RNA sequence: GGGAACGACUCGAGUAGAGUCGAAAAGUAUUGUUAUUAUUGUCUAUAUAUAUUGUAUAUUGAUGUGUCAAUGUACUAUCCUCAUUUUGAUCAUAUGAUAAGAUGAUGUAUGGAAUAGUGAAUAUAAGAAAAACAACGAACAUCAUAUUGAUAUUCACCCAAGAAUAUCUUUCGAGAUAUUCUUGGGAAAAGAAACAACAACAACAAC
Reactivity to 2A3 in 0.01 (KOAc 150mM, MgCl2 10mM, bicine 150mM(pH8.5), 24C), signal-to-noise 1, nucleotides 027 to 156: g070u050a090u240u200g020u060u050a160u130u050a040u250u040g000u170c110u000a160u020a120u070a020u000a060u300u000g020u060a070u040a040u050u080g020a020u020g040u020g090u020c020a040a070u040g000u090a050c020u020a000u040c020c020u020c040a040u000u110u110u110g180a030u040c020a110u020a110u300g050a060u020a060a050g020a070u020g000a000u010g040u090a090u100g070g000a090a020u020a000g000u010g000a090a000u150a000u030a170a170g100a050a060a000a000a000c010a040a040c050g010a000a040c000a000u000c000a000u000a000u000u020g040a040u100a030u160u290c210a020